[RMDB]
RNA sequence: GGGAACGACUCGAGUAGAGUCGAAAAACGGGAGGAAGGAAUUGGGAGUCUACUGUUAGAAGGUCUUUACAGUACAUGUAAAGCAGUAUCAUAUUACUUGAAGGUGGCCUCUCAUGAAAGAUUAACGAUGUAUACUGCAAAACCCUAGGUCAACUGAAGUAUCGUAUAUGUUCGCAUAUACGAUACUAAAAGAAACAACAACAACAAC
Reactivity to DMS in 0.01 (KOAc 150mM, MgCl2 10mM, bicine 150mM(pH8.5), 24C), signal-to-noise 3, nucleotides 027 to 156: a090c070g010g010g020a090g010g010a110a060g020g000a070a140u000u000g010g020g000a070g010u000c020u000a060c020u000g000u010u000a140g010a110a120g020g000u000c020u000u000u010a030c020a100g020u000a060c180a140u010g030u000a030a060a070g000c050a060g050u000a030u000c080a100u000a110u010u000a060c070u010u000g000a090a140g040g020u010g000g000c030c020u000c040u000c020a010u000g010a080a060a210g010a150u000u000a030a090c080g000a100u000g010u000a070u000a050c040u000g000c020a060a080a040a080c010c010c040u000a050g000g000u000c040a030a160c080u000g000a150
Reactivity to 2A3 in 0.01 (KOAc 150mM, MgCl2 10mM, bicine 150mM(pH8.5), 24C), signal-to-noise 5, nucleotides 027 to 156: a020c040g030g020g010a020g020g010a090a020g020g040a030a060u120u100g030g010g000a040g010u000c020u050a020c020u040g040u110u070a050g030a130a030g060g040u040c000u000u030u010a020c010a040g060u060a080c070a190u080g020u050a030a020a020g030c010a010g000u010a020u060c060a030u050a080u220u090a040c030u040u090g050a080a020g030g010u020g030g000c020c010u040c010u000c010a000u040g040a090a050a010g060a060u130u140a040a080c050g000a010u040g020u050a040u020a050c040u040g000c000a000a020a050a160c020c000c010u030a050g010g040u060c050a060a050c050u040g020a060

Source: RMDB library OK3TST, as collected in RNAgym. This 207-nucleotide RNA was probed chemically with DMS and 2A3. Reactivities are given for positions 27 through 156. For DMS the reverse transcriptase was MarathonRT. High DMS reactivity at an A or C suggests that its Watson-Crick edge is free. For 2A3 the reverse transcriptase was SuperScript II with manganese.